[RMDB]
RNA sequence: GGGAACGACUCGAGUAGAGUCGAAAAGCAAUACCUGUCACCUCUCGUGGUGAACAAGCUCGUCAGCAACUGAUACAAGCGGCGACCGAGUUGUUCGGCGAACAGGGUUUGAAAGGGGCUACCACCCAAGAGUACCAACGUUCGCGUUGGUACUCUUAAAAGAAACAACAACAACAAC
Reactivity to DMS in 0.01 (KOAc 150mM, MgCl2 10mM, bicine 150mM(pH8.5), 24C), signal-to-noise 1, nucleotides 027 to 126: g020c040a140a110u010a060c000c010u010g010u000c030a040c060c020u000c090u000c100g030u000g040g010u010g000a000a020c000a030a040g000c000u020c010g030u000c000a130g040c000a130a020c020u000g020a210u050a110c180a120a030g040c300g000g010c010g000a110c160c040g000a010g010u010u010g000u000u000c040g000g020c000g000a020a040c220a130g010g010g010u000u010u000g000a030a070a050g000g000g000g040c000u010a060c190c110a170c060c000c030